Source information: Chemical mapping of a 207-nucleotide RNA with 2A3 and DMS. For DMS, 5,702 sequencing reads were counted. For 2A3 the reverse transcriptase was SuperScript II with manganese. The 2A3 profile rests on 2,189 reads. The data come from the RNA Mapping Database (RMDB), library OK3TST. DMS adducts were read by reverse transcription with MarathonRT.
RNA sequence: GGGAACGACUCGAGUAGAGUCGAAAAGUUGCCUGCGUUCACGGCGAUCAGCUGCCUUUCCAAGAGUUCAAGUGGGACGCGAAGGACGACUGGCGCCGUUUCUAUGGCCUAUCUGGCGCCUGGCAGUCACUCCACACUCCCAGACGCCGUCGUCAACAUAGAGUACGGAAUUCGUUCCGUACUCUAUAAAAGAAACAACAACAACAAC
Reactivity to 2A3 in 0.01 (KOAc 150mM, MgCl2 10mM, bicine 150mM(pH8.5), 24C), signal-to-noise 2, nucleotides 027 to 156: g120u120u110g040c010c000u030g000c050g030u050u040c040a000c030g010g020c040g030a300u050c000a000g000c010u110g030c010c000u030u060u060c070c030a140a050g050a030g100u080u140c100a210a060g100u160g120g070g040a010c020g000c050g050a000a010g020g010a060c060g030a080c030u010g000g000c000g000c000c000g010u030u060u000c070u070a120u090g020g020c000c010u070a170u040c070u090g010g020c000g010c000c000u000g000g020c010a000g000u030c030a020c170u050c050c020a050c000a010c080u030c000c020c000a000g010a020c010g000c060c000g040u080c010g050u080c020a070a070c010
Reactivity to DMS in 0.01 (KOAc 150mM, MgCl2 10mM, bicine 150mM(pH8.5), 24C), signal-to-noise 2, nucleotides 027 to 156: g030u000u000g010c030c030u000g000c060g020u000u010c080a050c040g030g020c000g000a110u000c030a040g050c020u000g030c010c020u000u000u000c030c080a100a190g020a130g030u000u010c030a110a190g030u010g020g000g030a000c040g020c080g000a110a070g010g000a050c020g000a020c040u000g020g020c040g040c010c000g000u000u000u010c010u000a150u000g000g000c060c010u020a040u000c090u010g040g000c040g010c000c000u000g010g010c030a080g020u000c030a070c080u000c140c080a130c080a090c040u000c060c010c020a050g000a010c030g010c010c010g040u010c070g040u000c030a080a140c190